[RMDB]
RNA sequence: GGGAACGACUCGAGUAGAGUCGAAAAGACGUGGAGGUCUCGCGCCCUCCUUUGCGCGUAAGUACGUCGAAAUUCGGUGCUGUGGAUCGCACCGUCUGAUCCAUUAGAUAUCCGCUAUGUGCCGCGGUUGGGCAUUUACACUUACCCGAAAGGGGAAAGUCAGUAUACGAUUCGUCGUAUACUGACUAAAAGAAACAACAACAACAAC
Reactivity to DMS in 0.01 (KOAc 150mM, MgCl2 10mM, bicine 150mM(pH8.5), 24C), signal-to-noise 3, nucleotides 027 to 156: g000a040c030g000u010g000g010a120g010g000u010c020u000c080g020c050g000c160c020c020u010c040c030u020u000u000g000c020g030c060g030u010a070a100g050u000a040c040g000u010c050g020a050a090a170u000u000c000g010g020u000g000c030u010g030u000g010g010a070u000c060g000c010a300c110c110g020u000c030u000g000a100u000c020c010a080u000u000a080g020a180u000a120u000c020c010g000c120u010a090u010g060u000g010c030c050g020c050g010g010u000u000g000g000g010c060a070u000u010u000a120c080a070c050u000u000a200c010c000c010g000a050a100a190g000g000g010g010a040a060
Reactivity to 2A3 in 0.01 (KOAc 150mM, MgCl2 10mM, bicine 150mM(pH8.5), 24C), signal-to-noise 5, nucleotides 027 to 156: g070a010c020g020u060g030g070a030g010g050u030c030u030c050g020c000g000c010c030c020u120c010c040u070u050u130g030c060g000c010g020u050a080a050g030u020a040c020g010u030c050g030a020a030a050u110u060c020g010g000u010g020c040u040g010u070g090g030a040u080c030g000c030a050c070c000g010u010c020u040g030a010u000c000c010a080u100u150a030g090a140u090a050u070c030c010g000c030u080a080u190g050u030g040c000c030g040c030g100g000u100u090g050g000g010c020a020u040u040u090a040c080a010c010u090u150a060c000c000c000g060a050a040a020g020g010g010g000a020a020